[RMDB]
Structure probing data (2A3 and DMS) for a 177-nucleotide construct.
RNA sequence: GGGAACGACUCGAGUAGAGUCGAAAAGUGGGACGAGCUGGAAGAAGAUUCUGAAGAAUAAGUGUGAUCUACGUCACUCAUAACUGCAACGGAUAAUUUGUUGUUGCAUAAAAUGUGUGCUCGAUCAAUUAUCGUAGCCAUUCGUGGCUACGAUAAUAAAAGAAACAACAACAACAAC
Reactivity to 2A3 in 0.01 (KOAc 150mM, MgCl2 10mM, bicine 150mM(pH8.5), 24C), signal-to-noise 3, nucleotides 027 to 126: g030u030g000g000g030a030c030g020a020g010c040u050g030g020a030a020g030a010a000g020a070u110u000c020u080g100a120a070g060a100a070u190a160a040g060u070g050u040g110a020u000c020u100a030c040g100u110c040a010c010u000c000a030u060a100a020c050u010g000c010a020a000c030g090g070a060u090a210a270u220u140u240g110u080u060g000u000u000g000c000a000u090a070a120a020a010u060g050u000g000u000g000c010u010c040g010a030u000c030a020
Reactivity to DMS in 0.01 (KOAc 150mM, MgCl2 10mM, bicine 150mM(pH8.5), 24C), signal-to-noise 5, nucleotides 027 to 126: g020u010g000g000g020a070c090g010a070g000c050u000g000g020a080a030g020a100a090g000a110u000u000c050u010g020a090a110g010a060a040u000a070a080g010u010g000u010g000a010u000c020u010a140c290g000u010c020a030c010u000c020a010u000a090a250c300u000g000c000a010a020c000g000g010a090u020a060a130u010u010u010g010u020u000g000u000u000g010c010a020u010a040a060a090a040u000g000u010g000u010g010c050u000c240g010a030u010c040a050
2A3 adducts were read by reverse transcription with SuperScript II with manganese. The RNA was probed in 150 mM KOAc, 10 mM MgCl2 and 150 mM bicine (pH 8.5) at 24 C. Reactivities are given for positions 27 through 126. In probing experiments dimethyl sulfate is read out at A N1 and C N3, which are open when not base-paired.